RNA sequence: GGGAACGACUCGAGUAGAGUCGAAAAUGUGUUCCCUCAAGUUUGGAACUUUGAUGUACUGGGGGAAAAUAGGAUCUGCUUUUGAUCAGUUGUGGCGCGGAAAGAAAGCGGUAGAAGAACUUGGUAGGUCAUAUUAGUCGUUCGCGACUAAUAUGACAAAAGAAACAACAACAACAAC
Reactivity to DMS in 0.01 (KOAc 150mM, MgCl2 10mM, bicine 150mM(pH8.5), 24C), signal-to-noise 2, nucleotides 027 to 126: u020g000u030g010u000u000c000c000c000u010c040a030a030g010u010u010u000g000g020a130a130c060u010u010u010g020a120u000g020u000a080c060u020g000g000g010g000g010a080a040a060a090u000a100g010g000a070u010c030u000g010c080u000u000u010u000g010a160u000c040a100g010u000u010g040u000g040g020c020g020c050g030g000a040a050a190g000a040a040a030g020c040g000g020u000a060g010a160a130g000a070a030c040u000u000g010g020u010a100g030
Reactivity to 2A3 in 0.01 (KOAc 150mM, MgCl2 10mM, bicine 150mM(pH8.5), 24C), signal-to-noise 1, nucleotides 027 to 126: u210g080u000g000u030u000c010c000c040u020c020a040a020g010u030u080u130g050g020a050a020c030u130u080u220g090a120u150g040u010a050c070u050g000g010g000g000g120a040a010a020a120u240a040g070g000a060u020c040u020g040c050u050u030u040u080g030a020u040c030a050g060u100u080g120u120g110g000c060g000c030g070g010a090a050a000g020a010a040a000g000c000g030g010u100a010g030a100a010g000a000a010c010u000u020g080g050u110a120g000